Conditions: 150 mM KOAc, 10 mM MgCl2 and 150 mM bicine (pH 8.5), 24 C.
Structure probing data (2A3 and DMS) for a 177-nucleotide construct.
Values cover nucleotides 27 to 126.
RNA sequence: GGGAACGACUCGAGUAGAGUCGAAAAGACACGACGGAGACGUCGUGUCAAAGAGUGGGAAACCACUCAAAGAGCCACAGCUUCGGCUGUGGCUCAAGGCGCGGCAGGGUCCGCGGAACAAACCAAACCAUACCUAGUGAUUCGUCACUAGGUAUGGAAAAGAAACAACAACAACAAC
Reactivity to 2A3 in 0.01 (KOAc 150mM, MgCl2 10mM, bicine 150mM(pH8.5), 24C), signal-to-noise 2, nucleotides 027 to 126: g000a010c010a000c010g000a000c010g010g030a050g030a070c010g010u020c000g010u000g000u000c010a010a000a000g000a000g000u010g000g010g000a010a080a100c000c000a000c010u000c000a020a040a010g010a010g000c030c010a000c010a020g060c020u140u160c300g110g000c020u030g010u010g020g000c010u010c010a000a000g010g000c000g010c000g010g010c060a180g300g010g150u050c010c020g020c000g010g060a040a010c040a040a040a010c020c020a040a020a060
Reactivity to DMS in 0.01 (KOAc 150mM, MgCl2 10mM, bicine 150mM(pH8.5), 24C), signal-to-noise 2, nucleotides 027 to 126: g000a020c000a000c000g000a000c000g000g010a300g000a200c010g010u000c000g030u000g000u000c010a020a080a100g000a000g010u000g000g010g000a130a140a230c000c000a000c000u000c010a020a050a050g010a030g020c000c000a020c000a010g020c000u000u000c300g020g010c040u010g060u000g000g010c020u000c000a050a070g000g010c040g010c010g000g020c000a240g010g020g030u020c000c010g060c020g010g000a050a150c180a050a060a130c030c050a060a110a270

Overview
DMS adducts were read by reverse transcription with MarathonRT. As a SHAPE reagent, 2A3 marks flexible, mostly unpaired nucleotides at the ribose 2'-OH. For DMS, 1,799 sequencing reads were counted.